An RNA of 177 nucleotides, treated with DMS and read out base by base. Conditions: 150 mM KOAc, 10 mM MgCl2 and 150 mM bicine (pH 8.5), 24 C. For DMS the reverse transcriptase was MarathonRT.

[RMDB]
RNA sequence: GGGAACGACUCGAGUAGAGUCGAAAAGAUAUGGAAGGCUCAGUUGGGAGAAGCAUACUCGGAAACGAGUAUGACUUCAUCGAUCAACUGAGGCCUUCCUAAGUCAAAAGAUCUCUUCGGAGAUCAACAAAUCCAUACCCUUCGGGGUAUGGAUUUGAAAAGAAACAACAACAACAAC
Reactivity to DMS in 0.01 (KOAc 150mM, MgCl2 10mM, bicine 150mM(pH8.5), 24C), signal-to-noise 1, nucleotides 027 to 126: g010a060u000a300u020g000g000a020a000g000g000c000u000c000a040g020u000u010g000g000g000a070g040a020a010g000c000a020u000a000c000u000c000g030g000a170a100a240c000g000a020g000u020a000u020g020a190c020u000u020c000a240u000c240g020a090u020c010a010a000c040u000g000a030g020g010c000c000u000u010c000c010u010a000a140g000u010c070a190a130a140a090g000a040u000c000u000c000u000u000c180g000g010a020g050a010u000c010a070a160

It was measured as part of the RMDB library TTRDES. Reactivities are given for positions 27 through 126. For DMS, 851 sequencing reads were counted.